[RMDB]
RNA sequence: GGGAACGACUCGAGUAGAGUCGAAAAUCAAGGUUCGCCUUGACGAAUGCGUACUACAAGCUUUUGACGCAGUCUGUGAAAGCAGUAUCCCAAAUAGGAUACUUAAGCACAGAAACUGCGAUAAGCUUGUAUCGCCGGCUAGAUUCUUCGGAAUCAAGUAAUUAAUGGAAUUCGUUCCAUUAAUUACAAAAGAAACAACAACAACAAC
Reactivity to DMS in 0.01 (KOAc 150mM, MgCl2 10mM, bicine 150mM(pH8.5), 24C), signal-to-noise 4, nucleotides 027 to 156: u000c000a010a020g020g000u000u010c300g020c000c000u000u000g030a020c030g010a150a080u000g020c000g020u010a100c070u010a010c000a020a010g010c000u000u000u000u000g020a280c050g000c010a020g000u000c000u000g010u010g010a110a080a230g010c300a050g000u000a010u000c000c010c030a050a160a200u000a040g010g010a020u000a000c000u000u000a120a200g020c010a010c000a020g010a060a050a100c000u000g010c000g010a100u000a060a020g010c000u000u000g000u000a010u010c000g000c000c020g020g020c040u000a100g000a040u000u000c010u000u010c270g060g010a060a090u000c050a060a260
Reactivity to 2A3 in 0.01 (KOAc 150mM, MgCl2 10mM, bicine 150mM(pH8.5), 24C), signal-to-noise 8, nucleotides 027 to 156: u030c010a020a020g070g010u050u110c210g120c080c000u010u020g000a030c030g130a160a110u180g010c010g020u070a110c070u000a000c050a000a000g010c000u050u020u110u170g190a090c020g000c000a010g010u030c000u010g000u020g080a120a090a040g110c040a010g020u000a000u020c010c030c020a140a150a110u300a110g000g000a000u000a000c000u020u050a060a010g060c020a000c000a020g030a170a200a050c000u000g000c000g010a010u000a020a000g000c000u010u010g000u000a010u060c000g010c030c020g040g030c050u050a060g010a040u020u000c010u030u060c230g110g000a010a010u030c040a030a050

The record gives the reactivity of an RNA of 207 nucleotides to DMS and 2A3. The RNA was probed in 150 mM KOAc, 10 mM MgCl2 and 150 mM bicine (pH 8.5) at 24 C. For 2A3 the reverse transcriptase was SuperScript II with manganese. Reactivities are rounded to 0.1 and cut off at 0 and 3. For DMS, 9,735 sequencing reads were counted. 2A3 is a SHAPE reagent: it acylates the 2'-hydroxyl of flexible nucleotides of all four kinds.